[RMDB]
RNA sequence: GGGAACGACUCGAGUAGAGUCGAAAAGAUAUGGAUCCCAGCUCUUUUGACGAGCACUGUUCGGAAACGAACACUGCUCGAUAAGAGCGGGAUCCUAAGUCAAAAGGUAUCAGUUCGCUGAUACCAACACCGUAUCCGAGUUCGCUCGGAUACGGUGAAAAGAAACAACAACAACAAC
Reactivity to 2A3 in 0.01 (KOAc 150mM, MgCl2 10mM, bicine 150mM(pH8.5), 24C), signal-to-noise 1, nucleotides 027 to 126: g020a000u060a000u070g000g000a000u000c020c040c060a100g020c010u070c020u060u300u150u300g300a250c110g000a010g050c010a000c000u010g020u000u000c000g070g010a000a040a040c030g020a000a000c000a010c010u020g100c000u000c030g100a140u190a110a000g010a010g000c040g000g020g010a000u000c010c010u040a030a000g020u000c010a000a030a030a280g000g000u010a010u000c000a000g010u080u120c300g010c210u000g000a000u000a010c010c000a020a010

An RNA of 177 nucleotides, treated with 2A3 and read out base by base. The reactions ran in a buffer of 150 mM KOAc, 10 mM MgCl2 and 150 mM bicine (pH 8.5), at 24 C. It was measured as part of the RMDB library TTRDES. Reactivities are given for positions 27 through 126. Values are in units of 0.01, from 0 to 300, in steps of 10. 2A3 adducts were read by reverse transcription with SuperScript II with manganese.